[RMDB]
RNA sequence: GGGAACGACUCGAGUAGAGUCGAAAACCGUAGGUUGACUGGGAGUGAUGACCUAUGGGAACCGUCAUAUUCGAAAGAGUAUGACUCAGUACCAUAGCAAGCUUAGGUCAACCUAAACGGAAAGUGCUAACUUUAACUUCGGUUAAAGUUAGCACAAGUCAUCGAAGUAGUUCGCUACUUCGAUGACAAAAGAAACAACAACAACAAC
Reactivity to 2A3 in 0.01 (KOAc 150mM, MgCl2 10mM, bicine 150mM(pH8.5), 24C), signal-to-noise 3, nucleotides 027 to 156: c010c000g000u010a010g010g000u000u010g000a000c020u040g080g300g020a020g010u050g060a300u160g050a050c000c020u000a000u000g040g000g000a000a000c010c000g000u000c000a000u010a000u020u000c020g060a100a040a040g000a020g010u000a000u000g010a000c000u000c000a000g000u000a000c000c000a000u000a000g000c020a140a040g000c000u020u050a020g000g000u010c010a000a000c000c000u000a010a010a000c020g020g020a240a080a050g020u010g000c020u010a000a000c000u000u000u010a000a000c010u020u100c270g030g020u000u010a000a000a000g000u000u000a010g040c000a000c000a000a000
Reactivity to DMS in 0.01 (KOAc 150mM, MgCl2 10mM, bicine 150mM(pH8.5), 24C), signal-to-noise 1, nucleotides 027 to 156: c000c020g030u000a040g010g000u020u000g000a030c000u010g000g000g000a060g010u000g000a060u000g000a180c200c000u000a000u030g010g000g000a110a160c230c300g040u010c000a000u000a010u000u000c020g000a220a110a230g000a070g020u020a000u000g020a000c000u000c030a100g000u000a210c010c010a030u000a030g010c000a060a220g010c010u000u000a300g000g000u000c000a030a020c000c000u000a000a010a090c040g010g010a110a100a080g000u010g020c020u030a000a010c000u000u010u010a010a000c000u000u020c300g020g040u010u000a000a000a000g020u000u000a020g020c000a000c000a000a200

Notes: The record gives the reactivity of an RNA of 207 nucleotides to 2A3 and DMS. Values cover nucleotides 27 to 156. For 2A3, 4,216 sequencing reads were counted.